[RMDB]
An RNA of 177 nucleotides, treated with DMS and 2A3 and read out base by base. For 2A3, 1,001 sequencing reads were counted.
RNA sequence: GGGAACGACUCGAGUAGAGUCGAAAAGUCAAAGCAUUGAAGACAAAGUUUUUAAGUUCUCUCAAAAACCUCGUCACCAAAUUUUUGUAGAACCUGAAUCAUUGAGUCUAGAUACUAUUUAUUUAGAUACCAUUUAGCUAUUCGUAGCUAAAUGGUAAAAAGAAACAACAACAACAAC
Reactivity to DMS in 0.01 (KOAc 150mM, MgCl2 10mM, bicine 150mM(pH8.5), 24C), signal-to-noise 3, nucleotides 027 to 126: g030u010c050a070a080a070g030c100a050u000u000g000a130a120g000a010c020a050a200a120g000u000u000u000u020u010a020a100g010u000u000c170u020c090u020c060a020a020a010a030a100c050c030u000c300g010u000c030a060c110c040a060a060a170u010u000u000u010u000g010u000a060g000a040a070c020c060u000g020a030a040u000c090a080u000u000g010a240g000u000c010u000a090g000a000u000a060c100u000a110u000u010u010a020u030u000u010a050g010a290
Reactivity to 2A3 in 0.01 (KOAc 150mM, MgCl2 10mM, bicine 150mM(pH8.5), 24C), signal-to-noise 1, nucleotides 027 to 126: g100u040c030a090a000a000g000c020a050u000u190g030a130a020g010a020c020a030a020a020g020u010u040u000u010u050a030a010g020u090u000c020u000c000u000c050a050a060a070a100a160c000c050u030c090g110u090c020a010c010c030a020a050a150u050u150u050u030u050g000u020a000g020a030a040c010c010u000g090a050a000u120c010a030u120u080g040a010g030u010c010u010a020g000a070u060a130c030u080a190u170u250u040a150u010u110u060a060g040a030
For 2A3 the reverse transcriptase was SuperScript II with manganese.
Values cover nucleotides 27 to 126.